Description: Chemical mapping of a 177-nucleotide RNA with DMS and 2A3. It was measured as part of the RMDB library OK2TST. The RNA was probed in 150 mM KOAc, 10 mM MgCl2 and 150 mM bicine (pH 8.5) at 24 C.
[RMDB]
RNA sequence: GGGAACGACUCGAGUAGAGUCGAAAAGUACCUUGGGAUGCAUCUGAAUAGAACGGAUGAACUGAGUGAGUGCAUUCAUGAAUGCAGCGAUGCAGAAUAUGUGGGAUGCUUCCGUUGACUGAAUGACCACCGCAGGUGAAUUCGUUCACCUGCGGUGAAAAGAAACAACAACAACAAC
Reactivity to DMS in 0.01 (KOAc 150mM, MgCl2 10mM, bicine 150mM(pH8.5), 24C), signal-to-noise 2, nucleotides 027 to 126: g020u000a170c060c050u020u010g020g030g010a050u020g020c020a000u000c000u000g000a070a090u010a090g010a120a150c190g020g010a020u010g000a050a060c020u000g000a150g020u010g010a050g070u000g000c010a050u010u010c020a100u010g000a120a190u000g000c000a010g000c290g000a120u010g000c010a030g000a120a130u010a020u010g020u000g010g000g000a030u000g010c000u000u000c000c030g000u000u000g000a050c090u000g030a050a110u000g000a170c170
Reactivity to 2A3 in 0.01 (KOAc 150mM, MgCl2 10mM, bicine 150mM(pH8.5), 24C), signal-to-noise 1, nucleotides 027 to 126: g000u100a140c000c000u040u080g080g000g020a080u090g000c000a030u000c020u070g090a170a050u050a110g030a050a060c090g000g000a010u030g020a040a000c000u020g080a040g210u240g070a110g030u070g010c010a000u000u060c010a010u170g110a150a050u060g000c000a040g040c070g070a050u040g070c040a000g000a110a080u250a090u120g090u210g070g000g000a000u040g000c000u010u000c010c050g020u080u090g010a070c050u030g010a120a100u100g070a000c010
2A3 adducts were read by reverse transcription with SuperScript II with manganese. Values cover nucleotides 27 to 126.